[RMDB]
Structure probing data (2A3 and DMS) for a 177-nucleotide construct.
RNA sequence: GGGAACGACUCGAGUAGAGUCGAAAAUCGCGCGCCGCCUUGAGGACGUCGAGGAUCUGCGCCUGCACCGUGACGUCGAGCGCCGUGGUCGGUUCGUCACAGAUCAACAGGUCGGGAUCGUUGGCGACCAGAGCAAAUGGUUCGCCAUUUGCUCUGGAAAAGAAACAACAACAACAAC
Reactivity to 2A3 in 0.01 (KOAc 150mM, MgCl2 10mM, bicine 150mM(pH8.5), 24C), signal-to-noise 2, nucleotides 027 to 126: u010c010g010c000g000c000g000c040c010g040c000c040u060u080g070a090g080g070a030c010g030u020c000g020a010g050g000a030u000c020u140g130c010g020c000c020u030g000c030a050c060c070g000u030g010a020c000g030u070c030g010a040g060c100g010c010c080g110u110g060g070u040c000g010g030u100u120c010g000u000c020a010c010a060g050a110u080c050a020a130c000a030g010g120u130c100g070g020g010a010u020c080g180u020u050g010g010c000g020a030
Reactivity to DMS in 0.01 (KOAc 150mM, MgCl2 10mM, bicine 150mM(pH8.5), 24C), signal-to-noise 3, nucleotides 027 to 126: u000c090g000c040g010c040g030c000c050g010c030c040u010u040g010a140g000g010a090c020g010u000c030g020a050g000g010a030u000c030u000g010c130g020c040c020u010g000c090a080c070c050g020u000g000a030c020g040u000c040g000a060g030c080g020c110c100g050u000g000g000u010c020g010g010u000u010c010g000u000c010a020c040a080g000a120u000c070a060a100c070a040g000g010u010c040g000g000g000a040u000c020g000u000u010g000g010c010g000a170
The data come from the RNA Mapping Database (RMDB), library OK2TST. The reactions ran in a buffer of 150 mM KOAc, 10 mM MgCl2 and 150 mM bicine (pH 8.5), at 24 C. For 2A3 the reverse transcriptase was SuperScript II with manganese.